[RMDB]
RNA sequence: GGGAACGACUCGAGUAGAGUCGAAAAGAUCUGAUUCAGUGUCGUCUGGCAGGGGUCAGGUUGAAGCCCUGGGCUGUGUGUUGAAGUACAUGCACGAUGUGUACGCGGCACCAGAUGAUCAGGCAUGCGGUGUAUCAUCGUUCGCGAUGGUAUACCGAAAAGAAACAACAACAACAAC
Reactivity to 2A3 in 0.01 (KOAc 150mM, MgCl2 10mM, bicine 150mM(pH8.5), 24C), signal-to-noise 9, nucleotides 027 to 126: g020a020u000c000u010g000a010u010u000c010a080g300u010g010u040c100g100u110c190u300g010g000c000a010g000g000g000g020u000c000a000g010g010u020u050g040a040a020g030c010c000c000u020g020g040g010c010u010g050u020g000u000g030u300u020g050a260a070g010u010a000c000a000u020g040c090a040c300g140a300u150g000u000g000u010a000c000g000c010g020g000c000a000c000c000a010g010a060u150g050a070u110c010a000g010g020c030a030u160g070
Reactivity to DMS in 0.01 (KOAc 150mM, MgCl2 10mM, bicine 150mM(pH8.5), 24C), signal-to-noise 9, nucleotides 027 to 126: g000a010u000c000u010g000a010u000u000c010a030g020u000g020u000c010g010u040c230u040g010g010c010a040g010g000g010g000u000c000a010g000g010u000u000g010a070a080g020c090c010c000u000g000g000g010c000u000g000u040g010u000g010u000u000g000a050a200g020u000a010c000a010u000g010c080a170c260g010a130u010g000u000g010u000a010c010g000c020g000g000c010a010c010c010a020g000a060u030g010a070u020c010a030g000g000c040a150u030g010